[RMDB]
RNA sequence: GGGAACGACUCGAGUAGAGUCGAAAAUGAGCCCCCGUGCCUGGCCUUAUUUUCUUUUUAUUGAGACAGAGUCUUCCUCUGUCACCUAGGCUGGAGUGCAGUGGUGUGAUCUUGGCUCACUCUGCAAGCUCGCUAGAUAAUUCGUUAUCUAGCGAGCAAAAGAAACAACAACAACAAC
Reactivity to DMS in 0.01 (KOAc 150mM, MgCl2 10mM, bicine 150mM(pH8.5), 24C), signal-to-noise 1, nucleotides 027 to 126: u000g000a190g020c030c000c030c080c050g000u000g010c020c000u000g000g010c030c000u000u000a020u000u010u000u030c010u030u010u010u000u000a060u050u000g000a160g000a020c010a020g000a060g000u010c180u000u020c240c000u010c000u000g000u000c010a060c100c090u020a030g030g020c050u010g000g000a130g010u000g000c000a060g050u020g010g030u010g010u010g000a060u000c080u000u000g020g010c030u000c020a050c050u000c010u000g010c050a120a200
Reactivity to 2A3 in 0.01 (KOAc 150mM, MgCl2 10mM, bicine 150mM(pH8.5), 24C), signal-to-noise 1, nucleotides 027 to 126: u120g000a020g000c030c000c000c010c000g000u010g030c070c000u000g010g040c010c020u000u020a050u060u170u060u140c060u060u290u070u040u070a220u260u190g080a080g000a010c000a010g010a000g090u050c100u080u030c090c000u000c000u050g000u020c020a020c000c010u010a020g000g010c000u000g020g030a090g100u070g000c010a010g000u050g200g030u110g020u050g080a090u040c080u060u130g060g000c000u020c000a020c000u040c010u050g000c020a030a100
Source information: Conditions: 150 mM KOAc, 10 mM MgCl2 and 150 mM bicine (pH 8.5), 24 C. Structure probing data (DMS and 2A3) for a 177-nucleotide construct. It was measured as part of the RMDB library OK2TRN.